[RMDB]
RNA sequence: GGGAACGACUCGAGUAGAGUCGAAAAAAGAGGAGACUGCUGGACUCGCCGCCCAAGUUCGAGAUGGGCCACGUUCCGAACGAAGAGAUGCGGGAAGAAGGGAUCAGCAUCCGAGAGGGAGAGGACGGUAAAGAGCAUUGGAACGCCGAGGGGACACGCUCUUUAAUACCUUCGGGUAUUAAAGAGCAAAAGAAACAACAACAACAAC
Reactivity to 2A3 in 0.01 (KOAc 150mM, MgCl2 10mM, bicine 150mM(pH8.5), 24C), signal-to-noise 2, nucleotides 027 to 156: a030a010g060a000g020g010a030g030a050c020u060g080c050u080g070g010a090c040u020c050g030c050c030g030c010c000c010a060a020g070u060u130c080g020a010g020a190u030g010g070g000c020c030a090c060g030u070u020c030c000g010a070a010c020g050a110a050g110a020g010a080u080g050c030g010g030g010a000a070g070a060a020g040g030g030a050u020c030a000g020c020a020u010c010c020g090a080g030a030g090g030g010a030g000a020g030g010a020c030g010g010u070a080a070a050g030a010g020c050a060u010u160g060g010a070a020c050g020c050c010g030a040g010g020g000g020a010c030a020c110
This 207-nucleotide RNA was probed chemically with 2A3. Values cover nucleotides 27 to 156.